[RMDB]
RNA sequence: GGGAACGACUCGAGUAGAGUCGAAAAGCGUUCCGCGACAACUCGGAGCGGGUUUCCGGGAAACGCGCCGACAGCGAAGGCCCCAUGCCGUUCGACGACGCCGCGGCCGAAGCGGCACGCGAACUCCACGGCGCGCUCCGCGCUGCCGUCCUGUCGGCCUAGCCAAUAUAUUCGUAUAUUGGCUAGGAAAAGAAACAACAACAACAAC
Reactivity to 2A3 in 0.01 (KOAc 150mM, MgCl2 10mM, bicine 150mM(pH8.5), 24C), signal-to-noise 2, nucleotides 027 to 156: g000c000g020u030u020c010c000g000c090g050a080c080a130a020c020u010c070g130g110a150g120c180g010g050g010u020u030u000c010c010g010g000g000a130a080a000c030g000c030g010c000c010g000a000c010a010g040c090g120a060a060g020g010c030c040c000c020a050u180g020c040c020g030u020u030c040g140a300c030g020a090c090g170c020c010g000c010g040g100c100c090g050a100a000g000c020g000g020c000a010c000g010c000g010a040a020c010u030c070c020a020c030g000g000c000g010c010g000c040u150c080c130g000c020g030c040u140g000c000c000g000u000c010c020u000g000u000c010g000g020
Reactivity to DMS in 0.01 (KOAc 150mM, MgCl2 10mM, bicine 150mM(pH8.5), 24C), signal-to-noise 2, nucleotides 027 to 156: g040c050g020u000u000c030c010g010c050g040a110c060a080a130c020u010c020g020g000a110g050c070g010g010g030u010u010u000c040c000g020g030g020a090a070a070c080g020c060g000c000c010g020a040c010a040g000c090g000a070a090g000g000c010c030c060c030a100u010g000c030c010g010u000u010c040g010a140c010g020a140c030g030c030c010g030c040g000g020c150c160g000a130a200g030c010g030g000c030a160c010g000c030g010a040a060c060u000c040c060a050c000g030g070c040g050c050g030c050u020c060c060g000c010g010c030u010g020c010c010g020u000c020c010u000g000u000c010g000g010